The data come from the RNA Mapping Database (RMDB), library OK1LIB.
Chemical mapping of a 177-nucleotide RNA with 2A3.
The 2A3 profile rests on 393 reads.
Reactivities are given for positions 27 through 126.
RNA sequence: GGGAACGACUCGAGUAGAGUCGAAAAUAGCCAACAGGCGAAAAAGCGUCGUAGCGGCGGUGAUCGGCGAUGAAAAGUUCGAAUCGCUUGUGGCGGAAUGACGCAUCUUGACCCAAGGCAAAGCUCGGAUGGGUAGCUCGUUCGCGAGCUACCCAUCAAAAGAAACAACAACAACAAC
Reactivity to 2A3 in 0.01 (KOAc 150mM, MgCl2 10mM, bicine 150mM(pH8.5), 24C), signal-to-noise 1, nucleotides 027 to 126: u110a000g040c000c000a080a000c090a140g000g000c100g180a080a040a000a000a140g060c000g000u080c050g000u030a000g060c000g060g000c000g010g000u000g000a120u070c000g010g020c120g020a030u210g150a020a060a050a000g150u300u300c140g000a030a090u030c010g040c110u240u220g000u090g280g000c060g020g000a040a180u180g000a000c010g000c000a040u040c120u030u080g120a300c000c000c080a000a000g080g050c120a000a100a000g000c010u060c090g110